This 207-nucleotide RNA was probed chemically with 2A3 and DMS.
For 2A3, 3,948 sequencing reads were counted.
2A3 adducts were read by reverse transcription with SuperScript II with manganese.
Source: RMDB library OK3TST, as collected in RNAgym.
Values are in units of 0.01, from 0 to 300, in steps of 10.
The reactions ran in a buffer of 150 mM KOAc, 10 mM MgCl2 and 150 mM bicine (pH 8.5), at 24 C.
[RMDB]
RNA sequence: GGGAACGACUCGAGUAGAGUCGAAAACUUGCAUAGAAUCUGGCCUCCCCAUUCCAGUGAUGAACUACAUCUCAUCCCAGACCCAAAUUGACUCAGUGAUGAUCCAUUACUUUGUCAAAGCUGCCAACAAACUACUGCUUAAAGAUCAGGAACUGCCCUGUUACUGACUAUUCGUAGUCAGUAACAGAAAAGAAACAACAACAACAAC
Reactivity to 2A3 in 0.01 (KOAc 150mM, MgCl2 10mM, bicine 150mM(pH8.5), 24C), signal-to-noise 5, nucleotides 027 to 156: c020u060u110g000c050a090u090a170g110a080a120u090c070u070g060g020c010c010u070c030c030c000c000a020u100u000c000c000a020g030u040g070a060u040g020a040a040c020u060a030c110a070u030c030u010c030a050u040c020c010c000a030g060a140c040c000c020a020a080a060u030u030g000a010c000u000c020a000g010u000g010a030u020g040a120u040c030c000a000u020u020a030c000u010u040u020g010u010c000a010a000a030g030c040u040g020c020c010a030a020c050a070a230a040c040u090a050c020u020g040c000u030u070a080a080a020g050a040u090c050a030g020g050a030a030c020u090g000c010c010
Reactivity to DMS in 0.01 (KOAc 150mM, MgCl2 10mM, bicine 150mM(pH8.5), 24C), signal-to-noise 3, nucleotides 027 to 156: c050u000u000g010c030a120u000a150g000a090a090u000c030u010g010g030c040c010u010c010c000c000c000a160u020u000c050c010a050g040u010g020a130u000g000a080a120c040u000a130c030a060u000c010u000c060a130u000c020c020c010a130g020a120c020c020c040a040a060a140u000u000g020a070c010u000c050a040g030u000g000a100u020g000a190u010c100c050a080u000u000a050c030u000u000u000g000u010c000a030a050a080g000c040u000g010c030c040a040a140c050a070a080a080c030u000a060c020u000g010c020u000u000a070a040a080g000a060u020c030a060g010g010a080a120c090u000g020c050c020